[RMDB]
RNA sequence: GGGAACGACUCGAGUAGAGUCGAAAACCUCACUUCGGUGAGGAAAAAAUCCUAAGUCAGUUCAACAGCCAUUUGUGGAGAUGCUUAUCGGAAACGAUAAGCUAAUCUCCAUUUGUGGACAUGAACUGAUAUGGAAAAAAAUCGGCUUCGGCCGAAAUACUCGGGUAUGUUUCGACAUACCCGAGUAAAAAGAAACAACAACAACAAC
Reactivity to 2A3 in 0.01 (KOAc 150mM, MgCl2 10mM, bicine 150mM(pH8.5), 24C), signal-to-noise 2, nucleotides 027 to 156: c010c000u000c010a020c000u020u060c130g110g010u000g000a000g000g000a000a020a000a000a000a140u060c020c000u050a140a010g010u000c000a010g010u010u000c020a070a050c060a270g080c010c000a020u030u050u020g010u000g020g010a000g000a000u050g000c000u000u010a010u000c010g040g030a060a060a100c010g000a000u000a000a000g010c000u010a010a000u000c000u000c010c000a000u000u000u000g010u000g000g050a120c040a200u050g000a010a010c000u000g000a000u000a010u010g000g050a040a090a020a020a000a000a130u110c000g010g010c010u060u060c130g160g000c000c000g090a000a000a190
Conditions: 150 mM KOAc, 10 mM MgCl2 and 150 mM bicine (pH 8.5), 24 C. The record gives the reactivity of an RNA of 207 nucleotides to 2A3.